Source information
Structure probing data (DMS and 2A3) for a 177-nucleotide construct. For 2A3 the reverse transcriptase was SuperScript II with manganese. Conditions: 150 mM KOAc, 10 mM MgCl2 and 150 mM bicine (pH 8.5), 24 C. For DMS the reverse transcriptase was MarathonRT. The data come from the RNA Mapping Database (RMDB), library OK2TRN.

RNA sequence: GGGAACGACUCGAGUAGAGUCGAAAAGAUUACAAUCUGCUUUUGGUGGUAUCGUUGGCGCAAUGAUAGAGAUUGGUGUUAAACGUGGAUUAUACUCAAAUGAGGCUGGUCAAGGUACAGGUCCACAACCACUAUGCGAAUUCGUUCGCAUAGUGGUAAAAGAAACAACAACAACAAC
Reactivity to DMS in 0.01 (KOAc 150mM, MgCl2 10mM, bicine 150mM(pH8.5), 24C), signal-to-noise 3, nucleotides 027 to 126: g000a100u010u010a140c220a110a090u000c040u000g000c050u000u010u000u000g000g000u010g000g010u010a040u000c050g000u000u010g010g000c090g020c060a070a060u010g020a050u000a070g000a080g010a080u000u000g010g020u000g000u000u010a040a080a070c100g030u010g020g010a080u010u010a100u000a080c020u000c050a080a050a100u000g010a040g000g010c040u000g010g000u000c020a040a040g010g000u000a060c170a040g000g000u000c030c020a030c120a120
Reactivity to 2A3 in 0.01 (KOAc 150mM, MgCl2 10mM, bicine 150mM(pH8.5), 24C), signal-to-noise 2, nucleotides 027 to 126: g040a020u140u130a070c080a080a080u020c020u080g060c020u070u070u050u110g070g030u020g010g010u070a050u170c050g070u040u050g010g000c050g000c060a050a080u140g030a070u070a100g140a020g040a090u020u080g020g000u040g050u040u070a100a060a010c030g030u000g000g000a020u040u080a050u080a090c040u020c050a070a030a090u210g010a010g000g100c040u040g030g010u060c030a020a020g030g000u040a010c020a060g000g050u060c000c000a050c010a020
For 2A3, 1,999 sequencing reads were counted.
As a SHAPE reagent, 2A3 marks flexible, mostly unpaired nucleotides at the ribose 2'-OH.